RNA sequence: GGGAACGACUCGAGUAGAGUCGAAAAGGCGGACAGGAGAGUGCUCGCAGCCAAGGAGGAGGCCCUGCAAGUCUCCCAAGGGAGCGUCGAUGCCCAGAUCACUGCAGCCAGUGACGAGAUGCGCUCGAUCGUGCAAUGGAUUCGUCCAUUGCACGAUAAAAGAAACAACAACAACAAC
Reactivity to 2A3 in 0.01 (KOAc 150mM, MgCl2 10mM, bicine 150mM(pH8.5), 24C), signal-to-noise 2, nucleotides 027 to 126: g070g000c050g040g000a030c020a000g060g020a110g070a020g060u080g030c020u050c070g020c000a030g010c000c030a020a050g050g020a080g040g000a000g000g010c000c010c030u020g080c090a060a040g000u000c000u000c010c040c020a030a090g110g050g010a060g030c010g020u040c060g040a050u120g010c000c030c020a010g000a090u070c010a020c020u060g050c050a070g100c100c040a020g010u010g030a030c050g010a030g020a060u130g000c020g000c030u000c040g010
Reactivity to DMS in 0.01 (KOAc 150mM, MgCl2 10mM, bicine 150mM(pH8.5), 24C), signal-to-noise 3, nucleotides 027 to 126: g010g020c000g010g010a090c070a110g010g010a110g010a120g020u000g000c020u030c070g020c060a120g000c020c040a090a090g000g000a150g000g000a070g000g020c000c030c040u010g020c080a110a200g000u000c020u010c010c020c030a120a140g000g040g010a070g010c020g020u020c040g010a090u010g000c010c010c020a050g030a120u020c040a040c020u010g000c170a090g000c150c010a040g020u000g000a040c040g010a130g000a070u000g000c070g010c030u000c070g000
Chemical mapping of a 177-nucleotide RNA with 2A3 and DMS. The DMS profile rests on 2,470 reads. For DMS the reverse transcriptase was MarathonRT. 2A3 is a SHAPE reagent: it acylates the 2'-hydroxyl of flexible nucleotides of all four kinds.